[RMDB]
RNA sequence: GGGAACGACUCGAGUAGAGUCGAAAACCGCGCAAAGACCUGGACAUGAACGGCCGGUUCAAAGUCGAGUCCAAGAAGGAUAUGCGCGAGAAACGCAAGAUCAAGUCGCCGAACAUCGCCGACUCGGCGAUUAGGUUGCGUUCGCGCAACCUAAUCGAAAAGAAACAACAACAACAAC
Reactivity to DMS in 0.01 (KOAc 150mM, MgCl2 10mM, bicine 150mM(pH8.5), 24C), signal-to-noise 8, nucleotides 027 to 126: c050c010g030c100g030c060a050a100a110g000a070c020c010u000g020g010a030c020a120u010g010a080a100c040g010g020c080c090g000g000u000u000c110a060a080a110g000u000c030g000a160g010u000c010c040a090a120g010a140a080g000g000a110u000a150u000g010c000g020c000g010a080g000a070a070a060c090g010c100a060a060g010a080u000c050a060a090g000u000c030g010c070c010g000a050a080c120a090u000c090g020c100c040g000a130c080u000c030g010g010
Reactivity to 2A3 in 0.01 (KOAc 150mM, MgCl2 10mM, bicine 150mM(pH8.5), 24C), signal-to-noise 7, nucleotides 027 to 126: c010c000g000c000g000c020a080a070a020g070a110c010c040u040g000g010a010c020a070u120g120a200a050c030g080g040c060c030g090g060u120u100c050a090a060a010g020u030c010g060a010g010u000c010c000a040a090g140a070a040g140g000a030u040a050u130g020c010g000c020g000a040g040a030a120a020c120g010c100a070a030g020a140u090c040a030a020g050u030c010g010c030c000g020a060a040c050a150u160c040g020c040c010g040a030c020u020c030g050g010

This 177-nucleotide RNA was probed chemically with DMS and 2A3. For DMS the reverse transcriptase was MarathonRT. Conditions: 150 mM KOAc, 10 mM MgCl2 and 150 mM bicine (pH 8.5), 24 C. For 2A3, 11,660 sequencing reads were counted.